[RMDB]
Conditions: 150 mM KOAc, 10 mM MgCl2 and 150 mM bicine (pH 8.5), 24 C. Chemical mapping of a 177-nucleotide RNA with DMS. For DMS, 1,501 sequencing reads were counted.

RNA sequence: GGGAACGACUCGAGUAGAGUCGAAAAGAUAUGGACUCAUGGAGUAGCCGACCCGAAGAACGCCAAAAGCUCGGAAACGAGCUUUUGGCGGGAGGGUCGGAACUACUAUGAGGUGAGUCCUAAGUCACGAAUCUUAUAAGUUCGCUUAUAAGAUUCGAAAAGAAACAACAACAACAAC
Reactivity to DMS in 0.01 (KOAc 150mM, MgCl2 10mM, bicine 150mM(pH8.5), 24C), signal-to-noise 2, nucleotides 027 to 126: g000a060u000a150u010g010g000a020c010u000c000a010u000g000g030a300g020u000a010g000c000c000g020a010c020c000c000g000a090a240g010a150a140c020g000c000c000a000a010a020a010g030c040u000c060g060g000a050a030a110c000g030a010g040c000u000u010u000u000g040g000c020g030g000g010a050g010g010g020u000c010g000g000a020a020c040u020a300c000u000a070u000g010a300g000g020u000g010a020g020u000c000c000u010a020a060g000u010c010a200